Description: Structure probing data (2A3) for a 207-nucleotide construct.
[RMDB]
RNA sequence: GGGAACGACUCGAGUAGAGUCGAAAAAGCACGGUUUUUGAGGACGCAUUUUGUCCGUGCGGUAAUGCCCUCCUUUACACUUUCUCGCAUGGUGCGGGAGUGCGGAGAGGAAACAAAAGCUAGUCUCGAUAGGCGGUUAACUUCGGUUAACCGCCAACGUUUGGGUAACGUUCGCGUUACCCAAACGAAAAGAAACAACAACAACAAC
Reactivity to 2A3 in 0.01 (KOAc 150mM, MgCl2 10mM, bicine 150mM(pH8.5), 24C), signal-to-noise 2, nucleotides 027 to 156: a000g020c000a000c020g010g000u010u040u000u000u000g070a110g010g010a010c050g020c160a150u000u000u000u000g000u010c000c000g000u000g000c010g010g120u300a020a040u300g010c000c010c000u020c000c000u080u180u120a030c010a000c020u190u250u040c030u010c000g020c000a070u250g230g050u280g210c000g000g000g000a010g010u020g000c020g030g000a040g020a030g010g000a000a010a040c000a000a000a000a000g120c030u050a030g000u000c000u000c070g010a090u130a130g000g020c020g010g010u020u000a000a000c000u010u050c180g020g000u000u000a000a000c000c000g000c000c000a000a000

Conditions: 150 mM KOAc, 10 mM MgCl2 and 150 mM bicine (pH 8.5), 24 C.
Reactivities are rounded to 0.1 and cut off at 0 and 3.
Reactivities are given for positions 27 through 156.